The record gives the reactivity of an RNA of 177 nucleotides to DMS and 2A3.
DMS adducts were read by reverse transcription with MarathonRT.
2A3 adducts were read by reverse transcription with SuperScript II with manganese.
Reactivities are given for positions 27 through 126.
Source: RMDB library M2PK50, as collected in RNAgym.
RNA sequence: GGGAACGACUCGAGUAGAGUCGAAAAACCUAUGGAUUCGUCCAUAGGUGCUGGCGCGCCGCCUUUGUCCUGUCGCGUGUGCGUGGUGGGCGAUAUACGCGCAAUAGUGACAAUUCGUUGUCACUAAUCCGGGAGUACAAUUCGUUGUACUCCCGGAAAAAGAAACAACAACAACAAC
Reactivity to DMS in 0.01 (KOAc 150mM, MgCl2 10mM, bicine 150mM(pH8.5), 24C), signal-to-noise 2, nucleotides 027 to 126: a040c010c000u000a000u000g010g000a040u000u010c180g010u000c010c000a000u000a000g010g000u000g030c150u000g010g020c040g010c000g020c130c040g020c010c040u000u010u000g010u020c050c010u000g020u010c030g020c040g050u000g040u030g050c010g020u010g000g020u000g000g000g020c000g000a080u000a070u000a080c130g010c000g010c020a100a150u010a010g020u000g000a020c000a020a070u000u010c180g020u000u000g000u000c000a010c000u000a040a110
Reactivity to 2A3 in 0.01 (KOAc 150mM, MgCl2 10mM, bicine 150mM(pH8.5), 24C), signal-to-noise 1, nucleotides 027 to 126: a000c000c000u000a000u040g020g000a030u040u170c240g010u000c100c000a010u000a000g010g000u000g100c090u050g080g040c000g020c040g010c020c040g020c020c000u060u080u120g070u060c060c010u110g090u200c010g020c040g060u180g130u130g130c040g010u010g010g060u060g040g030g000c050g040a000u030a010u040a100c010g000c010g000c030a000a030u060a010g000u000g000a020c010a020a000u050u020c230g060u050u020g010u000c000a000c000u030a020a130